[RMDB]
RNA sequence: GGGAACGACUCGAGUAGAGUCGAAAAUACAGCGAGACUGGUAGUGAUCUUCUUUACCAACCACCCAACUGUAGCAUAACCUCUGGCGUGUUGCAAAGCGGUUUGGUGAAAAUGUCACAUCCCAGUGCCAUGCUUACAAGUUCGCUUGUAAGCAUGGAAAAGAAACAACAACAACAAC
Reactivity to 2A3 in 0.01 (KOAc 150mM, MgCl2 10mM, bicine 150mM(pH8.5), 24C), signal-to-noise 3, nucleotides 027 to 126: u140a010c040a010g060c010g090a080g050a060c010u010g020g010u030a040g010u020g020a020u010c050u040u000c000u020u030u000a000c010c000a010a010c040c040a030c000c010c010a050a030c090u030g010u030a010g020c000a000u030a120a170c000c030u140c130u190g020g010c030g020u010g010u010u000g000c010a030a030a040g030c110g000g000u020u040u040g010g000u010g020a010a030a000a010u040g000u000c010a000c000a080u060c000c010c000a010g000u010g000
Reactivity to DMS in 0.01 (KOAc 150mM, MgCl2 10mM, bicine 150mM(pH8.5), 24C), signal-to-noise 3, nucleotides 027 to 126: u010a090c070a080g010c100g000a110g000a180c060u000g010g000u000a270g010u000g000a020u000c120u000u010c140u000u000u000a010c000c010a020a020c050c070a050c020c040c020a070a110c120u000g000u010a020g010c020a020u000a110a130c030c040u020c160u010g020g050c150g020u000g000u000u000g010c010a020a080a110g000c070g010g010u000u000u000g030g010u000g000a020a010a010a050u010g010u000c010a010c020a120u000c140c000c000a050g020u000g010